This 177-nucleotide RNA was probed chemically with 2A3 and DMS. For DMS, 7,597 sequencing reads were counted. For DMS the reverse transcriptase was MarathonRT. It was measured as part of the RMDB library TTRDES. 2A3 adducts were read by reverse transcription with SuperScript II with manganese. The RNA was probed in 150 mM KOAc, 10 mM MgCl2 and 150 mM bicine (pH 8.5) at 24 C.
[RMDB]
RNA sequence: GGGAACGACUCGAGUAGAGUCGAAAAAAAGAUAUGGAGCGUGCCGAGUGUACAAUCCAUCGAUCAGCUCUCGGAAACGAGAGCUGGGAGGAUUGUCACACGUUUGACGCACGCUCCUAAGUCAAAAGUUACCUAAAGUGUUCGCACUUUAGGUAACAAAAGAAACAACAACAACAAC
Reactivity to 2A3 in 0.01 (KOAc 150mM, MgCl2 10mM, bicine 150mM(pH8.5), 24C), signal-to-noise 3, nucleotides 027 to 126: a000a010a000g070a030u080a050u110g010g000a000g010c000g000u010g000c010c040g100a190g040u020g000u010a010c000a020a000u000c000c000a080u300c010g020a090u040c000a000g000c000u000c010u020c000g030g010a100a070a040c010g000a010g010a000g030c000u000g000g000g000a020g000g000a000u010u020g030u060c130a010c010a010c040g040u080u270u290g050a030c020g000c000a000c000g010c000u000c000c000u000a000a000g010u000c010a000a060a020a130
Reactivity to DMS in 0.01 (KOAc 150mM, MgCl2 10mM, bicine 150mM(pH8.5), 24C), signal-to-noise 5, nucleotides 027 to 126: a050a070a100g000a030u000a300u000g010g000a020g010c010g020u000g010c030c020g010a120g030u000g010u000a020c000a000a000u000c000c010a220u000c190g010a080u020c000a010g010c000u000c000u000c000g000g000a100a070a110c000g010a010g010a010g010c000u000g000g000g000a030g020g010a010u000u000g010u000c220a010c000a010c010g020u010u010u000g030a210c300g000c000a010c010g010c000u000c000c000u000a010a060g010u010c030a070a090a100a160